[RMDB]
RNA sequence: GGGAACGACUCGAGUAGAGUCGAAAACGCUUGCUUACCAACCGAUGACAACACCGCGACGGUGCGGCCCGCCUGGCGCAGCUCGGCCACCGCACGGGCUAGGGCUUCGUCGAGGGACCCGCUGGCACACUCCCAAUCGGUUCGCCGAUUGGGAGUGAAAAGAAACAACAACAACAAC
Reactivity to DMS in 0.01 (KOAc 150mM, MgCl2 10mM, bicine 150mM(pH8.5), 24C), signal-to-noise 1, nucleotides 027 to 126: c030g010c030u010u000g000c000u000u000a040c060c010a180a140c080c020g010a030u000g000a160c260a000a060c100a100c110c010g000c080g000a140c120g050g010u020g040c020g000g000c000c000c000g000c050c000u060g000g030c060g080c040a020g000c000u000c080g000g000c000c040a110c040c000g000c070a050c080g000g040g120c000u000a000g030g020g020c000u000u000c000g000u000c000g000a130g000g000g010a080c030c030c010g030c030u010g000g000c040a280
Reactivity to 2A3 in 0.01 (KOAc 150mM, MgCl2 10mM, bicine 150mM(pH8.5), 24C), signal-to-noise 3, nucleotides 027 to 126: c050g040c050u060u070g020c010u080u110a070c030c010a070a050c010c010g100a080u060g050a040c030a130a050c020a080c050c030g080c040g120a050c000g050g010u080g020c060g000g010c040c020c000g080c030c030u070g020g000c020g000c030a020g010c010u010c010g020g000c020c010a060c040c020g070c040a080c000g000g000g020c040u180a300g020g000g000c000u030u030c010g010u020c040g040a090g000g020g010a010c000c020c010g000c030u020g000g000c030a000

This 177-nucleotide RNA was probed chemically with DMS and 2A3. The reactions ran in a buffer of 150 mM KOAc, 10 mM MgCl2 and 150 mM bicine (pH 8.5), at 24 C. 2A3 adducts were read by reverse transcription with SuperScript II with manganese. It was measured as part of the RMDB library OK1LIB.